Chemical mapping of a 177-nucleotide RNA with 2A3.
The 2A3 profile rests on 1,007 reads.
Conditions: 150 mM KOAc, 10 mM MgCl2 and 150 mM bicine (pH 8.5), 24 C.
RNA sequence: GGGAACGACUCGAGUAGAGUCGAAAAUCUUUGUGCUACUUGCCCCUUUGCUAAGGGUGAUAGCUGUUCUUCUAAUUGCAAACAUUCAGUUGCUCAGUUGGUUAGUUACCUUUCUGAACGCUGUAAUCCUCCUGUAAUCGUUCGCGAUUACAGGAGGAAAAGAAACAACAACAACAAC
Reactivity to 2A3 in 0.01 (KOAc 150mM, MgCl2 10mM, bicine 150mM(pH8.5), 24C), signal-to-noise 1, nucleotides 027 to 126: u030c030u060u050u180g140u110g020c020u000a020c120u040u040g000c010c000c000c020u000u000u080g040c020u050a000a070g030g000g030u020g050a000u010a000g000c060u050g070u080u060c020u060u010c020u110a190a180u170u120g040c070a060a060a030c000a070u030u200c010a000g030u090u180g260c000u010c000a010g000u000u030g000g000u050u050a030g060u090u120a070c000c000u000u050u040c010u010g000a000a000c000g040c000u000g000u040a050a120u000